[RMDB]
Chemical mapping of a 177-nucleotide RNA with 2A3 and DMS. DMS adducts were read by reverse transcription with MarathonRT. Values cover nucleotides 27 to 126.

RNA sequence: GGGAACGACUCGAGUAGAGUCGAAAAUCUGGCUCCAUGCGGAGCCCGAGUUGUAAUUUGGAGAGGACACUUCGGGUGCGGCCACGGCAUAAGUUCCUUGGAACAGGACGUCAUAGAGGGUGAGAAUUGAUUAUUCCUAGUUCGCUAGGAAUAAUCAAAAAGAAACAACAACAACAAC
Reactivity to 2A3 in 0.01 (KOAc 150mM, MgCl2 10mM, bicine 150mM(pH8.5), 24C), signal-to-noise 5, nucleotides 027 to 126: u020c000u010g000g000c000u000c010c010a190u300g140c270g000g000a000g000c000c000c010g030a030g010u020u040g090u130a110a200u080u070u150g040g020a060g000a030g030g020a010c020a020c060u050u060c040g080g000g000u040g040c020g000g020c020c020a050c040g020g000c060a090u040a130a070g040u070u030c000c000u010u050g030g000a040a010c020a060g010g050a010c010g000u050c010a030u070a100g060a050g020g060g020u040g040a070g040a050a090u050
Reactivity to DMS in 0.01 (KOAc 150mM, MgCl2 10mM, bicine 150mM(pH8.5), 24C), signal-to-noise 4, nucleotides 027 to 126: u020c030u010g000g010c000u000c000c000a180u050g010c250g020g020a050g020c010c000c050g000a040g000u000u010g000u000a060a100u010u000u000g020g010a130g000a090g000g000a080c080a040c090u000u000c050g000g000g010u010g000c070g000g010c040c040a050c080g010g000c050a070u000a040a080g020u010u000c010c020u010u010g010g000a070a050c090a080g000g020a090c050g020u010c080a090u020a100g000a090g000g000g000u000g010a070g010a060a090u040
Background
The RNA was probed in 150 mM KOAc, 10 mM MgCl2 and 150 mM bicine (pH 8.5) at 24 C.